[RMDB]
RNA sequence: GGGAACGACUCGAGUAGAGUCGAAAACGAGGAACUCUUUCGCCAGCUCUUUGUUCGGACUGGCGGCGUUAAUACCUGCGCUCAGCACGCCAACGAACGGUUUGGAUGGUUGACCCUUGAAGGUCGAGUACUACGUCCUGUUCGCAGGACGUAGUACAAAAGAAACAACAACAACAAC
Reactivity to DMS in 0.01 (KOAc 150mM, MgCl2 10mM, bicine 150mM(pH8.5), 24C), signal-to-noise 2, nucleotides 027 to 126: c050g010a090g000g000a090a110c120u000c070u000u020u000c030g000c030c000a020g000c060u010c070u010u000u010g010u000u010c150g000g000a090c050u000g010g010c000g000g000c180g020u000u020a100a080u010a160c050c040u000g000c020g000c050u000c060a060g010c080a110c030g000c010c010a030a060c040g000a050a040c110g020g000u000u010u000g000g010a090u000g030g000u000u010g010a070c010c010c050u000u000g020a130a080g000g020u000c020g000a160
Reactivity to 2A3 in 0.01 (KOAc 150mM, MgCl2 10mM, bicine 150mM(pH8.5), 24C), signal-to-noise 2, nucleotides 027 to 126: c020g010a040g120g070a070a090c010u000c010u140u080u090c060g000c000c000a050g040c050u010c020u040u200u260g150u200u140c100g050g050a110c030u040g010g000c000g000g000c020g030u060u150a190a050u140a270c020c050u050g050c030g000c030u040c030a050g090c020a010c070g040c010c010a050a010c040g000a080a030c120g130g000u090u030u100g070g020a130u110g060g080u010u100g030a040c020c020c000u030u110g140a140a060g080g000u040c010g000a020
The record gives the reactivity of an RNA of 177 nucleotides to DMS and 2A3. Source: RMDB library OK2TRN, as collected in RNAgym. For 2A3 the reverse transcriptase was SuperScript II with manganese. The 2A3 profile rests on 1,123 reads. The RNA was probed in 150 mM KOAc, 10 mM MgCl2 and 150 mM bicine (pH 8.5) at 24 C.